Structure probing data (2A3 and DMS) for a 170-nucleotide construct.

[RMDB]
RNA sequence: GGGAACGACUCGAGUAGAGUCGAAAACCCCAGCCAGGGAUUGUCCUCCUCGAGUCUCUUGAGAUUCUUGUUGACCUUCCGGAGCUCCCUCUCGAGUUCCUCCUUUCUUCUUCUUCCAUCGAUCCACUAGCCCCACACUUCGGUGUGGGGAAAAGAAACAACAACAACAAC
Reactivity to 2A3 in 0.01 (KOAc 150mM, MgCl2 10mM, bicine 150mM(pH8.5), 24C), signal-to-noise 4, nucleotides 027 to 129: c000c000c000c000a010g070c000c030a040g030g010g030a070u030u090g070u050c010c030u000c000c000u020c030g050a030g000u000c000u010c000u030u110g060a060g010a130u130u060c050u070u070g100u090u100g070a030c000c000u020u040c020c010g030g000a010g000c010u040c020c030c010u040c020u060c040g020a020g000u040u060c000c020u060c000c000u010u040u010c000u010u000c000u030u000c000u040u030c010c000a070u040c040g110a050u030c020c000a070c090u000a070g080
Reactivity to DMS in 0.01 (KOAc 150mM, MgCl2 10mM, bicine 150mM(pH8.5), 24C), signal-to-noise 1, nucleotides 027 to 129: c000c000c000c220a020g120c000c140a150g000g000g000a060u010u060g030u090c010c070u000c050c070u000c010g000a080g050u000c020u010c030u050u170g020a000g020a090u000u050c040u010u050g080u030u060g040a090c050c030u030u010c000c080g090g030a150g030c120u040c000c120c000u060c000u010c030g050a080g020u020u050c090c010u010c030c020u020u030u020c050u000u020c010u030u000c000u000u000c050c060a090u070c130g050a070u040c010c060a120c060u010a180g050
DMS adducts were read by reverse transcription with MarathonRT. For DMS, 5,752 sequencing reads were counted. Source: RMDB library 15KLIB, as collected in RNAgym.